[RMDB]
RNA sequence: GGGAACGACUCGAGUAGAGUCGAAAAUUAAACCGGGAGCCGAAGCGCAACGGCGACCGGAAGGGCGACGGGAACCCGAAUCUCAACCCGGAGCCCAAGCGCAAGACAAACGGGAAGCGCAAAAAAACUAGGAUAAGAGAUUCGUCUCUUAUCCUAGAAAAGAAACAACAACAACAAC
Reactivity to DMS in 0.01 (KOAc 150mM, MgCl2 10mM, bicine 150mM(pH8.5), 24C), signal-to-noise 1, nucleotides 027 to 126: u030u040a100a290a210c000c000g010g020g000a230g000c000c040g020a030a130g010c070g030c060a160a190c000g000g050c000g000a170c010c000g000g020a030a040g000g000g010c000g000a280c000g000g000g000a160a040c060c010c000g000a060a130u040c090u000c130a130a180c030c010c000g000g000a240g000c040c000c000a000a000g030c040g000c060a120a050g000a060c090a020a090a060c170g020g010g000a110a160g000c030g010c000a020a000a090a030a070a070a130
Reactivity to 2A3 in 0.01 (KOAc 150mM, MgCl2 10mM, bicine 150mM(pH8.5), 24C), signal-to-noise 1, nucleotides 027 to 126: u030u020a010a010a050c000c000g000g000g050a010g000c000c010g050a130a010g140c040g000c120a030a040c020g000g000c000g000a040c010c000g020g020a070a150g000g020g000c010g000a040c010g010g000g000a090a120c020c030c050g070a030a120u140c170u020c190a060a120c030c000c020g000g000a000g020c010c000c000a030a010g020c030g000c010a030a070g070a240c050a050a180a020c090g050g030g000a060a030g000c030g000c170a000a010a000a000a000a150a150
The record gives the reactivity of an RNA of 177 nucleotides to DMS and 2A3. Values are in units of 0.01, from 0 to 300, in steps of 10. The DMS profile rests on 780 reads. Conditions: 150 mM KOAc, 10 mM MgCl2 and 150 mM bicine (pH 8.5), 24 C. For 2A3, 1,429 sequencing reads were counted.